This 177-nucleotide RNA was probed chemically with 2A3 and DMS.

[RMDB]
RNA sequence: GGGAACGACUCGAGUAGAGUCGAAAAUGGCACCAUAGCUUGCAAAAGACCUCGGUGUUCAUGUCUUAAAAGCUGGAUUUCUCAUGAGAGUAGGUUCAUUCAUUGCGUUUGAUGUUCUAACUAAGAGCUCACCAAACUAAUUCGUUAGUUUGGUGAGAAAAGAAACAACAACAACAAC
Reactivity to 2A3 in 0.01 (KOAc 150mM, MgCl2 10mM, bicine 150mM(pH8.5), 24C), signal-to-noise 3, nucleotides 027 to 126: u020g030g010c020a010c000c000a020u030a020g000c020u020u060g000c030a100a080a080a000g030a110c020c000u030c040g020g010u050g000u170u220c030a030u050g030u000c020u050u180a180a190a020a010g030c040u050g070g020a070u040u090u000c020u000c030a080u120g050a040g010a000g130u090a030g010g060u000u020c010a040u100u040c020a030u020u160g080c070g130u140u040u080g040a040u130g020u100u020c040u050a070a150c020u040a150a070g080a030g150
Reactivity to DMS in 0.01 (KOAc 150mM, MgCl2 10mM, bicine 150mM(pH8.5), 24C), signal-to-noise 6, nucleotides 027 to 126: u000g000g000c020a040c040c020a080u000a060g010c010u000u000g020c250a080a110a080a060g010a100c070c040u000c100g010g000u000g020u000u010c040a030u000g000u000c040u000u000a060a070a090a090g010c090u010g000g010a090u000u000u000c030u000c030a070u010g010a120g000a080g010u000a070g000g000u010u000c060a060u000u000c050a090u010u000g010c100g010u000u010u000g020a070u020g000u000u000c040u000a070a080c110u010a090a120g000a140g000

The 2A3 profile rests on 3,136 reads. For DMS the reverse transcriptase was MarathonRT. Reactivities are given for positions 27 through 126.